[RMDB]
Overview:
The record gives the reactivity of an RNA of 177 nucleotides to 2A3 and DMS.
RNA sequence: GGGAACGACUCGAGUAGAGUCGAAAAUGAAUAUGCGUUAUGGCGCUUAUUCCUAUGCACAUCAUUUGGUCGAAGUAGCUGUGCGUUUUGCAGCUCCAAGCGCUAUCAAGAAACGGCGUGGUAUUCACCAAGCCGAAGAGUUCGCUCUUCGGCUUGGAAAAGAAACAACAACAACAAC
Reactivity to 2A3 in 0.01 (KOAc 150mM, MgCl2 10mM, bicine 150mM(pH8.5), 24C), signal-to-noise 6, nucleotides 027 to 126: u080g010a010a000u010a010u020g010c020g000u030u090a100u110g050g000c000g000c000u020u030a030u050u040c000c020u050a070u070g090c090a060c030a150u190c020a030u120u080u220g050g020u080c060g080a130a030g040u140a000g020c010u010g010u040g040c060g100u050u010u140u250g010c000a010g000c000u000c020c020a040a010g000c000g000c000u010a040u140c110a090a080g060a090a080a010c060g000g000c000g000u040g110g020u040a030u030u000c010a010
Reactivity to DMS in 0.01 (KOAc 150mM, MgCl2 10mM, bicine 150mM(pH8.5), 24C), signal-to-noise 3, nucleotides 027 to 126: u010g000a050a020u010a020u000g020c010g010u000u030a080u020g010g020c000g010c020u010u020a160u000u000c030c040u020a010u000g000c140a060c160a060u040c080a080u000u030u020g000g020u000c050g000a110a100g000u020a080g020c040u000g010u000g010c200g020u010u000u000u010g000c100a050g010c020u000c070c090a020a020g010c000g010c000u000a040u010c080a110a100g010a030a070a120c180g000g000c000g040u000g040g060u000a020u000u020c050a200
For 2A3 the reverse transcriptase was SuperScript II with manganese. For DMS the reverse transcriptase was MarathonRT.